[RMDB]
RNA sequence: GGGAACGACUCGAGUAGAGUCGAAAACAUCGCGUAUUCGUACGCGAUGGUAGGGCUGUUUUUCUCGCUGACUUUCAGCCCCAAACAAUAAAGUCAGCAAAAUACGCGUAUCCUUCGGGAUACGCAAGAAAUAGUAACAGUUCGCUGUUACUAUUUCAAAAGAAACAACAACAACAAC
Reactivity to 2A3 in 0.01 (KOAc 150mM, MgCl2 10mM, bicine 150mM(pH8.5), 24C), signal-to-noise 8, nucleotides 027 to 126: c000a000u000c000g000c000g000u010a020u030u080c240g050u050a010c000g000c000g000a000u000g000g020u060a080g000g010g000c010u010g040u020u060u010u040u030c110u050c100g000c010u000g000a000c000u010u010u010c000a000g000c000c000c010c040a060a070a020c020a020a020u090a100a000a000g000u000c000a000g000c000a010a000a000a010u080a010c050g000c000g000u000a000u000c010c000u020u080c180g040g000g000a000u000a000c000g000c000a000a000
Reactivity to DMS in 0.01 (KOAc 150mM, MgCl2 10mM, bicine 150mM(pH8.5), 24C), signal-to-noise 7, nucleotides 027 to 126: c010a000u000c000g020c000g010u000a010u000u010c230g020u000a000c000g020c000g000a000u000g000g000u010a070g000g010g020c000u000g000u000u000u000u000u010c080u010c190g000c000u000g000a010c000u000u000u000c020a010g010c000c000c010c120a030a040a110c150a040a020u010a000a020a010g000u000c000a010g010c010a060a060a070a080u010a060c190g010c000g010u000a000u000c000c000u000u010c190g020g000g000a010u000a000c000g010c000a020a020
An RNA of 177 nucleotides, treated with 2A3 and DMS and read out base by base. Reactivities are given for positions 27 through 126. Source: RMDB library M2PK50, as collected in RNAgym. For DMS the reverse transcriptase was MarathonRT. For 2A3, 51,238 sequencing reads were counted. Conditions: 150 mM KOAc, 10 mM MgCl2 and 150 mM bicine (pH 8.5), 24 C.